[RMDB]
About this RNA:
This 207-nucleotide RNA was probed chemically with 2A3. The 2A3 profile rests on 631 reads. Values are in units of 0.01, from 0 to 300, in steps of 10. Conditions: 150 mM KOAc, 10 mM MgCl2 and 150 mM bicine (pH 8.5), 24 C. Source: RMDB library M2RFPK, as collected in RNAgym.
RNA sequence: GGGAACGACUCGAGUAGAGUCGAAAAAGAUCCACGCUACGGCGUGGAUCACACGUUCAUCCCUAUUGGGACGGAAGUAGGCAUAGUGCCGAAGGAACGCAUUAGUCAUGCGCUACGCCGCAUGACACACAUCAGAGUCACUUCGGUGACUCUGAAACUCAAAGAUCAGCUUCGGCUGAUCUUUGAGAAAAGAAACAACAACAACAAC
Reactivity to 2A3 in 0.01 (KOAc 150mM, MgCl2 10mM, bicine 150mM(pH8.5), 24C), signal-to-noise 1, nucleotides 027 to 156: a000g000a000u040c000c000a010c000g040c010u070a060c290g070g000c010g000u000g000g000a000u000c000a000c000a000c000g000u000u000c000a040u000c000c000c000u180a300u110u300g000g000g010a020c000g070g000a020a030g000u030a000g010g000c000a060u060a300g180u200g110c010c000g020a020a020g010g000a000a000c000g000c110a110u000u230a040g030u000c000a000u000g000c000g000c010u150a100c130g140c120c000g000c000a000u000g000a000c000a000c000a000c000a040u060c000a000g000a000g010u000c000a000c000u020u060c190g070g000u000g000a000c000u000c000u010g000a000a000a000